Source: RMDB library M2PK50, as collected in RNAgym.
An RNA of 177 nucleotides, treated with DMS and read out base by base.
The DMS profile rests on 1,321 reads.
The reactions ran in a buffer of 150 mM KOAc, 10 mM MgCl2 and 150 mM bicine (pH 8.5), at 24 C.
Reactivities are given for positions 27 through 126.
RNA sequence: GGGAACGACUCGAGUAGAGUCGAAAACUCUGAGUCUUCGGACUCAGAGAAACCCUUUCGACUCUGAUACCAACAAACGCGAGUUUGUUGGUAUAAUCGCAAAAAGGUGGGAGUUCGCUCCCACCAAGUAAUUAACACCCUUCGGGGUGUUAAUUACAAAAGAAACAACAACAACAAC
Reactivity to DMS in 0.01 (KOAc 150mM, MgCl2 10mM, bicine 150mM(pH8.5), 24C), signal-to-noise 2, nucleotides 027 to 126: c000u010c000u000g000a010g010u010c000u000u000c210g020g000a020c000u000c000a000g010a010g010a030a040a100c180c080c090u000u000u000c000g000a010c010u000c030u000g000a030u000a020c000c000a010a000c000a000a000a010c000g000c300g000a200g010u000u000u000g010u010u000g010g000u000a000u000a030a030u010c020g000c290a050a080a040a100a050g000g030u000g000g000g010a030g010u000u000c190g000c000u000c000c010c000a010c010c010a010a030